An RNA of 207 nucleotides, treated with 2A3 and read out base by base. It was measured as part of the RMDB library OK3TST. The 2A3 profile rests on 499 reads.

[RMDB]
RNA sequence: GGGAACGACUCGAGUAGAGUCGAAAAUGAAGAUUUUGAAGGUCUGCUUGGCGCAUCCGAUGCGGAUGUUCUGCAUUACGCCGACUAUGAAGGGAUGUGGCUUAGCGAUUACAAGGGCUGUCGUCAGGCCAACGCCCGCCUGAUCGCCGCCGCGCCGGCUCUCUUAUCGGUUCGCCGAUAAGAGAGCAAAAGAAACAACAACAACAAC
Reactivity to 2A3 in 0.01 (KOAc 150mM, MgCl2 10mM, bicine 150mM(pH8.5), 24C), signal-to-noise 1, nucleotides 027 to 156: u120g010a040a010g070a150u150u170u200u260g120a120a110g040g000u060c030u110g020c010u050u100g070g000c000g000c000a000u020c040c040g070a100u130g000c070g070g000a030u020g080u100u100c080u080g060c030a020u050u060a040c090g000c020c010g000a030c040u020a040u180g150a040a090g120g020g040a100u050g000u050g100g000c030u060u150a000g020c000g010a010u010u020a080c050a080a040g070g000g020c020u020g040u030c000g000u020c070a040g030g010c020c010a030a010c100g010c000c000c000g000c000c000u040g000a000u040c040g000c000c010g000c000c000g000c000g050c030c020g030